[RMDB]
RNA sequence: GGGAACGACUCGAGUAGAGUCGAAAAAUCCUGGCAUUCGUGCCAGGAUGUUUACCGAGAAAGUCCCUCGGUAUAAAAGGGCUACCCUUGGAAACAAGGGAAUAAUCGCAGUGUUCGCACUGCGAAAAUCCAUGUAUUGUUUCGACAAUACAUGGAUAAAAGAAACAACAACAACAAC
Reactivity to 2A3 in 0.01 (KOAc 150mM, MgCl2 10mM, bicine 150mM(pH8.5), 24C), signal-to-noise 3, nucleotides 027 to 126: a000u010c000c000u000g000g000c010a010u030u040c170g070u050g010c000c000a000g000g000a000u000g000u000u050u060a060c000c000g000a010g000a030a230a010g050u030c010c010c000u000c000g000g060u070a030u080a060a020a010a010g020g010g010c010u050a080c010c000c010u000u010g000g010a030a030a020c000a010a000g000g000g030a000a010u080a010a010u020c000g000c000a000g010u000g050u050u090c130g040c080a010c000u000g000c000g010a010a010a000
Reactivity to DMS in 0.01 (KOAc 150mM, MgCl2 10mM, bicine 150mM(pH8.5), 24C), signal-to-noise 8, nucleotides 027 to 126: a010u000c000c000u010g010g010c000a040u000u010c160g030u000g010c000c000a010g000g000a000u000g000u000u000u000a220c010c010g000a020g000a090a090a050g010u000c010c010c000u000c000g000g010u010a050u010a020a040a050a090g010g010g000c060u000a250c010c000c000u000u000g000g000a160a120a200c000a010a000g010g000g010a110a040u010a090a120u000c000g010c000a010g010u000g020u010u010c210g010c000a010c000u000g000c000g000a010a010a070